[RMDB]
RNA sequence: GGGAACGACUCGAGUAGAGUCGAAAAUGGUCAUUCGUGACCAGAAGACGCCUUUGUAGCGGAAUGGUAACGCGGCAGACUCAAAAUCUGCUUUGGUAACCCAGGUGGUAGUUCGACUCUCCCCAAAGGCACCAGAUGAUGCAUAUUCGUAUGCAAAUCCCAGAAAAGUUUUCGAACUUUUCUGGGAAAAAGAAACAACAACAACAAC
Reactivity to DMS in 0.01 (KOAc 150mM, MgCl2 10mM, bicine 150mM(pH8.5), 24C), signal-to-noise 1, nucleotides 027 to 156: u000g000g020u000c000a040u010u010c270g040u020g020a050c010c000a060g010a050a150g010a140c120g010c000c010u000u010u010g000u000a140g000c040g000g020a190a160u010g010g020u010a080a020c060g000c100g000g030c010a010g020a040c030u000c300a110a050a060a120u000c010u000g020c030u010u000u010g000g000u000a070a130c070c000c070a120g030g000u010g010g010u000a080g030u000u010c060g010a300c030u000c020u000c020c000c020c010a000a010a070g010g010c040a070c070c070a080g000a150u000g000a280u000g030c030a050u000a040u010u010c210g020u000a050u010g030c010a050a050a110
Reactivity to 2A3 in 0.01 (KOAc 150mM, MgCl2 10mM, bicine 150mM(pH8.5), 24C), signal-to-noise 1, nucleotides 027 to 156: u050g030g010u000c010a010u150u020c180g100u030g000a000c000c010a000g020a010a010g040a030c080g010c010c000u000u000u000g080u080a110g010c090g130g060a080a050u100g030g000u090a100a000c010g000c030g080g000c000a000g010a030c020u030c190a130a050a020a020u000c000u010g000c020u080u000u020g000g000u070a040a040c000c000c020a020g020g020u080g050g020u100a020g020u030u080c060g010a010c030u000c030u000c040c010c000c000a090a020a000g030g010c010a010c000c000a010g100a170u300g060a040u300g010c020a000u020a000u030u150c140g130u030a010u110g010c000a000a080a000
Structure probing data (DMS and 2A3) for a 207-nucleotide construct. The reactions ran in a buffer of 150 mM KOAc, 10 mM MgCl2 and 150 mM bicine (pH 8.5), at 24 C. Values are in units of 0.01, from 0 to 300, in steps of 10.